Background: Source: RMDB library OK3TST, as collected in RNAgym. This 207-nucleotide RNA was probed chemically with DMS and 2A3. Reactivities are given for positions 27 through 156. For 2A3 the reverse transcriptase was SuperScript II with manganese. The reactions ran in a buffer of 150 mM KOAc, 10 mM MgCl2 and 150 mM bicine (pH 8.5), at 24 C.

[RMDB]
RNA sequence: GGGAACGACUCGAGUAGAGUCGAAAAGUGUGAAGUGAGUGAGCCUCUUACGAGCACGAAUUACAUGGCUCUAUUGACAUUACUGGGCGCCAGGAGCCCUACCUGGACAAGUCUCGAAGAUCGGGCCGAGAUUGAGAGACGACUAUUACCGGCCACACAUAAUCGGAGUCUUCGGACUCCGAUUAUGAAAAGAAACAACAACAACAAC
Reactivity to DMS in 0.01 (KOAc 150mM, MgCl2 10mM, bicine 150mM(pH8.5), 24C), signal-to-noise 1, nucleotides 027 to 156: g010u030g000u000g000a180a200g000u000g000a080g060u020g020a000g000c010c030u010c020u000u000a140c050g020a300g000c030a110c020g000a080a110u000u040a120c140a090u000g020g080c020u010c020u000a180u000u010g060a140c060a140u000u010a100c050u000g020g000g020c090g000c020c010a050g020g020a110g040c010c120c000u000a070c020c020u000g010g000a100c080a130a150g030u000c010u000c030g000a120a240g000a020u010c040g010g020g050c180c060g020a210g000a110u020u020g020a300g000a140g000a040c010g000a080c080u000a110u010u000a020c010c020g000g000c020c000a060c060a080
Reactivity to 2A3 in 0.01 (KOAc 150mM, MgCl2 10mM, bicine 150mM(pH8.5), 24C), signal-to-noise 2, nucleotides 027 to 156: g010u020g030u030g060a010a090g000u010g040a020g010u080g070a020g050c060c020u180c050u080u050a000c010g030a000g020c000a010c040g040a010a080u180u120a100c130a150u100g020g010c020u020c000u040a110u030u160g060a020c040a030u030u180a120c050u040g070g050g000c050g010c000c000a020g000g020a050g020c000c000c010u040a070c000c000u040g030g030a110c010a130a020g000u030c020u030c010g020a060a010g000a060u070c060g020g000g000c010c000g040a070g000a040u030u070g030a000g000a000g000a110c050g020a020c000u110a060u110u080a040c130c000g000g000c000c000a030c000a000
Values are in units of 0.01, from 0 to 300, in steps of 10.